RNA sequence: GGGAACGACUCGAGUAGAGUCGAAAACGUCGUGAACUAGCGACAAUGCAUUAGGUCCAUCGUUAUCUAACCGAAACAUCGUGACUAGUAUUAGAAUAGAACCACGAGAGGGCGCUGGCAAACAAAGACGGAGUGUAUGAUUCGUCGUACGCUCCGUAAAAGAAACAACAACAACAAC
Reactivity to 2A3 in 0.01 (KOAc 150mM, MgCl2 10mM, bicine 150mM(pH8.5), 24C), signal-to-noise 9, nucleotides 027 to 126: c050g010u010c000g010u030g070a120a050c050u030a040g010c000g020a010c000a010a050u060g000c020a050u040u070a030g010g010u000c010c010a040u030c050g010u020u050a070u040c040u050a030a060c020c020g020a040a010a020c030a060u040c020g020u030g070a090c020u020a010g100u060a100u080u090a040g060a090a060u050a020g020a050a030c050c000a010c010g010a010g020a050g020g010g000c010g000c010u000g000g000c000a020a030a010c030a020a080a000g100
Reactivity to DMS in 0.01 (KOAc 150mM, MgCl2 10mM, bicine 150mM(pH8.5), 24C), signal-to-noise 9, nucleotides 027 to 126: c120g020u000c030g020u010g010a110a120c120u010a090g010c020g000a040c050a110a080u020g020c060a070u020u020a060g010g010u010c030c030a090u010c070g000u010u010a100u010c060u010a100a080c140c050g000a100a070a090c090a090u010c030g000u010g000a080c020u000a040g000u020a070u010u030a090g010a090a100u010a030g000a070a080c100c040a020c010g000a040g000a090g000g000g000c020g010c020u000g000g000c040a060a070a070c140a050a060a090g000
About this RNA
This 177-nucleotide RNA was probed chemically with 2A3 and DMS. The DMS profile rests on 96,271 reads. The reactions ran in a buffer of 150 mM KOAc, 10 mM MgCl2 and 150 mM bicine (pH 8.5), at 24 C. Values are in units of 0.01, from 0 to 300, in steps of 10.